[RMDB]
RNA sequence: GGGAACGACUCGAGUAGAGUCGAAAACAUCCAGAGGGAGGAAAUCCACACGGAGUUGACAGAGAAAUCACCUCCAGAGGACCCCUUCAGCGAACAGAAGAGCGUGAGCGCGUUGGGAGUGGGACCAGUUUUUAUUAGGGUUCGCCCUAAUAAAAACAAAAGAAACAACAACAACAAC
Reactivity to DMS in 0.01 (KOAc 150mM, MgCl2 10mM, bicine 150mM(pH8.5), 24C), signal-to-noise 3, nucleotides 027 to 126: c090a120u010c020c020a100g010a110g050g010g000a070g000g000a080a110a180u010c000c000a060c180a300c150g000g000a020g040u010u000g020a010c100a140g010a140g000a090a140a150u000c010a040c060c010u000c010c000a090g020a220g000g000a090c120c050c010c030u000u000c010a080g020c040g010a070a050c090a070g000a080a080g010a070g010c030g010u000g000a100g010c080g000c050g020u000u010g010g010g010a070g040u000g000g000g010a080c090c080a110
Reactivity to 2A3 in 0.01 (KOAc 150mM, MgCl2 10mM, bicine 150mM(pH8.5), 24C), signal-to-noise 1, nucleotides 027 to 126: c010a100u000c020c020a030g010a020g060g040g000a060g040g110a080a230a100u000c010c010a060c000a010c130g030g010a020g000u000u040g010a020c040a060g300a020g040a130a140a070u060c000a020c000c000u000c010c010a000g010a040g060g040a030c000c030c000c000u000u010c010a020g020c000g030a100a050c010a120g120a190a030g050a010g060c020g040u030g010a040g010c040g030c030g050u070u050g060g000g030a100g030u090g020g000g070a070c010c010a040